An RNA of 177 nucleotides, treated with 2A3 and DMS and read out base by base. The data come from the RNA Mapping Database (RMDB), library OK2TST. The 2A3 profile rests on 2,017 reads.
RNA sequence: GGGAACGACUCGAGUAGAGUCGAAAAUCUUUAAAGCUAGCUACACCGGUUUAUUCAAGAUGUUCUUCGACGUACUUGAUACGGAUGCACUGACCGGUAUGCCCACGAUUAUCGCUGCUACGGCUGGCUCACUCACAAGUUUCGACUUGUGAGUGAGAAAAGAAACAACAACAACAAC
Reactivity to 2A3 in 0.01 (KOAc 150mM, MgCl2 10mM, bicine 150mM(pH8.5), 24C), signal-to-noise 2, nucleotides 027 to 126: u000c000u000u170u080a090a220a020g010c050u010a000g000c000u040a030c030a030c080c000g000g050u070u050u070a110u050u100c020a020a010g040a120u040g040u130u060c040u140u090c100g060a030c000g000u100a120c010u030u110g010a050u070a050c040g080g050a050u140g040c030a030c120u040g030a020c000c000g000g000u030a000u040g010c030c020c040a050c040g020a020u110u130a060u170c030g000c050u000g020c020u030a020c040g030g060c000u010g000g050
Reactivity to DMS in 0.01 (KOAc 150mM, MgCl2 10mM, bicine 150mM(pH8.5), 24C), signal-to-noise 2, nucleotides 027 to 126: u010c020u000u000u040a070a080a100g010c030u000a050g020c040u000a150c220a060c050c000g000g000u000u010u000a130u020u000c030a000a030g000a100u000g020u000u000c080u000u020c150g030a040c030g010u000a070c010u000u000g000a050u010a080c120g000g010a060u010g000c070a090c120u000g000a020c020c010g020g010u000a030u000g010c020c030c020a160c120g000a120u010u010a090u010c060g010c090u010g010c010u000a050c080g010g000c000u000g000g000